[RMDB]
Source information: Structure probing data (2A3) for a 177-nucleotide construct.

RNA sequence: GGGAACGACUCGAGUAGAGUCGAAAAACGAUCUCCGCGUACUUUCUCGUUCACGUGUUCGCCGGCACGGCGGAGACGAUCCUGAGCGGCAUCAUGGCGCUCGUGAACUUCGAAUCGCUGAACGCGAGGGCUGCAGUGAGUUCGCUCACUGCAGCCCAAAAGAAACAACAACAACAAC
Reactivity to 2A3 in 0.01 (KOAc 150mM, MgCl2 10mM, bicine 150mM(pH8.5), 24C), signal-to-noise 1, nucleotides 027 to 126: a000c050g020a170u000c000u020c000c000g000c020g020u110a130c110u120u220u070c080u040c080g140u090u050c060a010c040g050u000g120u160u080c050g110c070c020g110g000c010a040c080g140g000c000g030g000a020g030a000c010g020a020u070c010c020u090g020a070g090c020g130g000c000a090u150c020a010u230g070g000c000g030c040u020c010g040u020g040a040a030c000u150u080c080g080a070a070u060c010g010c070u080g070a090a010c040g020c000g020a050

The RNA was probed in 150 mM KOAc, 10 mM MgCl2 and 150 mM bicine (pH 8.5) at 24 C.